[RMDB]
RNA sequence: GGGAACGACUCGAGUAGAGUCGAAAAUGUCGGCAAGCUCUAUAUAUGGACACUUACGAAGGGUUUUGGUUGUUUUGUAUCUCAAGCCGACUUUGAGUAUUUGAGGAAAAUACGACAGAAAAAAUAAAUAGACCGGUAUCCUUCGGGAUACCGGUAACAUUAUUUUAAGGUUCGCCUUAAAAUAAUGAAAAGAAACAACAACAACAAC
Reactivity to DMS in 0.01 (KOAc 150mM, MgCl2 10mM, bicine 150mM(pH8.5), 24C), signal-to-noise 1, nucleotides 027 to 156: u000g000u000c000g010g010c000a060a090g010c040u020c020u000a120u010a190u000a040u000g020g010a100c030a040c100u000u000a120c090g020a120a090g020g000g000u000u000u000u000g040g050u010u000g010u000u000u000u010g000u000a090u000c030u000c020a020a220g050c020c000g010a020c020u010u000u000g010a260g010u000a050u020u000u000g070a300g020g000a300a040a010a060u020a020c010g000a240c050a170g040a030a010a070a130a110a130u000a000a060a140u010a170g000a050c010c000g010g000u010a010u000c000c020u000u000c300g020g020g020a020u000a010c000c000g000g000u000a010a060
About this RNA: The record gives the reactivity of an RNA of 207 nucleotides to DMS. For DMS the reverse transcriptase was MarathonRT. Source: RMDB library M2RFPK, as collected in RNAgym.